Structure probing data (DMS) for a 177-nucleotide construct. Reactivities are given for positions 27 through 126. For DMS, 901 sequencing reads were counted.
RNA sequence: GGGAACGACUCGAGUAGAGUCGAAAACUAAGGGUCUUCGGACCCUUAGAAAUAACGGUCGGCUCAUGACGCUAGUCGAUCAUGCUGCUCGACCUACACUAAAAAGGCUCAGGUUCGCCUGAGCCAACCUUUGUCAGCAGUUCGCUGCUGACAAAGGAAAAGAAACAACAACAACAAC
Reactivity to DMS in 0.01 (KOAc 150mM, MgCl2 10mM, bicine 150mM(pH8.5), 24C), signal-to-noise 1, nucleotides 027 to 126: c000u000a010a010g000g000g000u010c010u000u020c180g020g000a000c000c000c000u000u010a000g000a050a120a120u000a030a060c270g000g000u000c000g000g000c000u020c010a040u000g000a000c040g010c050u000a080g030u000c020g000a150u000c000a000u000g000c160u000g020c010u000c010g000a040c000c000u010a040c210a090c110u030a010a010a070a150a090g000g010c000u000c000a020g000g000u000u010c240g040c000c000u000g000a000g000c000c010a000a020